[RMDB]
This 207-nucleotide RNA was probed chemically with 2A3. It was measured as part of the RMDB library OK3TST. 2A3 adducts were read by reverse transcription with SuperScript II with manganese.
RNA sequence: GGGAACGACUCGAGUAGAGUCGAAAAUGCAAGUAUCAUGUGAAUCGGGCAAGUCUGUCAAUUGCUGAUUAUCUGCAGAGAAGCGAGACUACAUGAAACACUGUUUGAAAUAAGCGGCAAUCGUCAUACUUUUACCAUUUUUGAAAAACAUCCUAAACGGCAUAGGGUAUUUCGAUACCCUAUGCCGAAAAGAAACAACAACAACAAC
Reactivity to 2A3 in 0.01 (KOAc 150mM, MgCl2 10mM, bicine 150mM(pH8.5), 24C), signal-to-noise 1, nucleotides 027 to 156: u150g000c030a060a010g070u010a070u040c040a050u160g070u050g140a110a110u010c110g050g010g000c010a030a030g000u000c030u030g000u060c000a020a060u040u030g000c000u000g000a050u080u130a050u080c000u050g010c030a020g000a020g010a020a050g040c040g110a000g050a060c010u060a050c030a110u150g000a060a090a000c100a020c010u050g020u270u190u070g120a130a130a030u060a030a030g010c000g010g000c000a000a080u090c040g000u040c060a000u040a160c010u010u020u120u170a070c010c010a030u040u000u000u160u000g080a030a000a000a020a020c040a050u000c020c010u000a060a130a000